[RMDB]
Chemical mapping of a 207-nucleotide RNA with 2A3 and DMS. 2A3 is a SHAPE reagent: it acylates the 2'-hydroxyl of flexible nucleotides of all four kinds. The DMS profile rests on 1,744 reads. The RNA was probed in 150 mM KOAc, 10 mM MgCl2 and 150 mM bicine (pH 8.5) at 24 C. DMS (dimethyl sulfate) methylates the pairing face of unpaired adenines and cytosines.
RNA sequence: GGGAACGACUCGAGUAGAGUCGAAAAAACUUCGAGGUCACAAAGCGGAUAACAGGCAGGUCAGAGGGAGAAAGAUUGCCAAGAAGCGUUAGAAGCAAAGUAAUAUACGAAAUGAUUAAGCUGGUAAAGAGUACUGGCAUGGCUAUAUUACAGCAGCCAUGUCCGCUACUUUCGAGUAGCGGACAUGAAAAGAAACAACAACAACAAC
Reactivity to 2A3 in 0.01 (KOAc 150mM, MgCl2 10mM, bicine 150mM(pH8.5), 24C), signal-to-noise 1, nucleotides 027 to 156: a020a000c040u070u060c040g030a040g030g010u040c030a000c030a070a110a030g040c040g000g020a030u070a180a040c020a050g010g050c000a000g000g050u020c010a040g020a060g060g020g010a000g030a010a030a000g030a050u080u120g010c010c000a030a020g080a030a010g000c020g060u060u040a040g030a100a010g000c010a110a020a000g020u020a020a040u030a000u000a040c030g050a020a050a130u090g030a040u070u140a060a030g000c010u030g020g010u080a160a210a020g140a020g050u020a010c020u010g000g020c020a020u080g040g000c000u020a020u000a010u090u070a030c040a030g020c000a000g020c010
Reactivity to DMS in 0.01 (KOAc 150mM, MgCl2 10mM, bicine 150mM(pH8.5), 24C), signal-to-noise 1, nucleotides 027 to 156: a040a020c050u000u000c030g030a030g020g050u000c010a110c080a030a110a010g050c090g000g000a120u000a080a200c030a120g000g050c070a150g020g010u000c010a120g020a120g030g030g020a120g000a040a040a050g010a150u010u030g050c070c020a070a100g030a060a100g010c070g010u000u000a080g020a090a050g050c090a060a120a190g000u010a020a000u000a050u020a080c070g010a100a080a090u000g000a110u000u000a040a090g000c000u010g000g000u010a050a050a290g000a190g010u020a020c080u010g030g000c000a110u000g020g000c030u000a020u000a020u000u000a000c040a170g020c050a080g000c010